[RMDB]
Chemical mapping of a 207-nucleotide RNA with 2A3 and DMS.
RNA sequence: GGGAACGACUCGAGUAGAGUCGAAAAUUGAUACAGACAUCCAGUCAGAGCGCCGUCAUGAGUUAUUUACUUACCUCAAAGAGAAAUACGGAUAUGACCGAGUAGCACAAGUGACUAACUAUACCAAGAUGUCUGCAAAGUCAGCGUUCAAAAACUCUAAUUACUGUUUUUUCGAAAACAGUAAUUAAAAAGAAACAACAACAACAAC
Reactivity to 2A3 in 0.01 (KOAc 150mM, MgCl2 10mM, bicine 150mM(pH8.5), 24C), signal-to-noise 5, nucleotides 027 to 156: u060u030g010a010u050a100c000a020g010a000c000a000u000c030c010a020g020u010c020a020g040a030g190c030g000c020c010g020u020c020a020u020g030a020g180u080u060a030u040u050u040a170c020u040u050a080c010c050u130c130a130a100a020g070a010g010a040a040a010u050a010c010g070g030a050u050a030u240g010a010c020c080g030a060g140u080a050g010c010a020c020a220a090g100u020g080a010c010u020a070a010c040u080a080u090a300c060c010a040a020g000a000u010g000u000c000u010g000c030a070a040a000g010u030c020a010g030c020g080u090u060c050a060a080a030a060a090c040u030c020
Reactivity to DMS in 0.01 (KOAc 150mM, MgCl2 10mM, bicine 150mM(pH8.5), 24C), signal-to-noise 4, nucleotides 027 to 156: u000u010g010a230u000a060c000a080g010a040c010a010u010c010c040a110g010u000c030a090g000a220g040c010g000c020c050g000u000c050a150u010g000a270g010u000u000a040u000u000u010a100c050u000u000a080c130c050u010c060a020a100a230g000a190g000a070a070a130u010a060c030g010g010a170u000a150u000g000a030c020c030g000a230g010u000a040g030c070a060c080a090a150g000u000g010a090c040u010a100a070c070u010a090u010a120c090c040a060a120g010a060u000g000u000c000u000g030c040a030a090a100g000u000c030a050g010c060g010u000u000c060a040a060a050a090a060c030u000c020
The reactions ran in a buffer of 150 mM KOAc, 10 mM MgCl2 and 150 mM bicine (pH 8.5), at 24 C.